[RMDB]
Conditions: 150 mM KOAc, 10 mM MgCl2 and 150 mM bicine (pH 8.5), 24 C. The record gives the reactivity of an RNA of 207 nucleotides to DMS and 2A3. 2A3 adducts were read by reverse transcription with SuperScript II with manganese. For DMS the reverse transcriptase was MarathonRT. Source: RMDB library M2RFOK, as collected in RNAgym. For DMS, 6,934 sequencing reads were counted.

RNA sequence: GGGAACGACUCGAGUAGAGUCGAAAAUACUUAGUACGCGCGUAGUUGCAGGCAUUCCGGGUGCAGCAACUGUCGCGGAAGACUUUUCCCAGAGUGUGCGCUUCAACUGGCGUGCUGAGUAGUGCACGAAUUGCACGUACGUUCGCGUACGUGCAAAGGAUAUACCCUCUUUCGAGAGGGUAUAUCCAAAAGAAACAACAACAACAAC
Reactivity to DMS in 0.01 (KOAc 150mM, MgCl2 10mM, bicine 150mM(pH8.5), 24C), signal-to-noise 3, nucleotides 027 to 156: u000a060c030u000u000a050g020u000a060c010g020c010g010c030g030u000a020g030u000u000g020c010a130g020g000c020a030u000u010c040c300g000g050g100u000g000c010a300g010c010a020a010c020u000g010u010c000g010c030g020g010a100a090g010a150c170u000u010u000u000c000c010c020a150g010a120g020u000g050u000g010c010g000c010u000u000c060a090a150c070u020g020g020c040g000u000g020c000u000g000a050g030u000a060g020u000g000c020a070c030g000a130a180u000u000g000c020a000c000g020u000a000c000g030u000u010c300g010c030g050u000a010c000g030u020g000c010a000a010a090
Reactivity to 2A3 in 0.01 (KOAc 150mM, MgCl2 10mM, bicine 150mM(pH8.5), 24C), signal-to-noise 5, nucleotides 027 to 156: u080a000c010u010u000a000g010u010a010c000g000c000g000c020g030u020a020g020u000u010g010c040a120g080g000c010a020u120u080c130c190g240g020g010u020g010c030a020g000c000a020a000c000u030g130u200c020g000c020g000g000a010a010g170a090c030u170u170u030u010c000c000c000a000g010a010g020u140g000u010g020c020g020c040u050u090c080a300a300c120u020g010g010c000g000u010g010c000u000g000a000g010u030a010g010u020g000c000a000c020g030a070a120u020u010g000c000a000c000g000u000a000c000g000u000u070c160g000c020g110u010a000c000g000u000g000c000a000a000a000